[RMDB]
RNA sequence: GGGAACGACUCGAGUAGAGUCGAAAAGCUCCUUUGCGCUUUUUUUUCGGAUUAGGCGUGGAGGCGAAAGUCACCCUCCUCGCAUCGCAAGUUCGUGCUUGCGACUUACACGUAGGGCGUGGGGUGGAAAACAGUAUGGGAUUCGUCCCAUACUGAAGUGACUCUUCUACUUCGGUAGAAGAGUCACAAAAGAAACAACAACAACAAC
Reactivity to 2A3 in 0.01 (KOAc 150mM, MgCl2 10mM, bicine 150mM(pH8.5), 24C), signal-to-noise 1, nucleotides 027 to 156: g000c080u070c030c020u020u090u080g030c020g000c120u020u010u000u000u010u000u000u000c280g140g080a120u110u030a060g010g010c010g000u040g000g010a010g010g000c050g140a140a080a000g090u040c050a080c000c000c020u060c050c000u020c010g000c020a000u020c000g000c000a000a000g030u150u300c110g230u300g060c020u010u010g000c000g000a000c000u110u100a020c050a020c100g190u190a040g010g000g000c070g020u020g020g000g000g030u100g020g010a020a050a000a000c000a000g000u000a000u000g000g020g000a010u010u010c080g070u040c070c000c000a000u000a000c000u000g010a060a030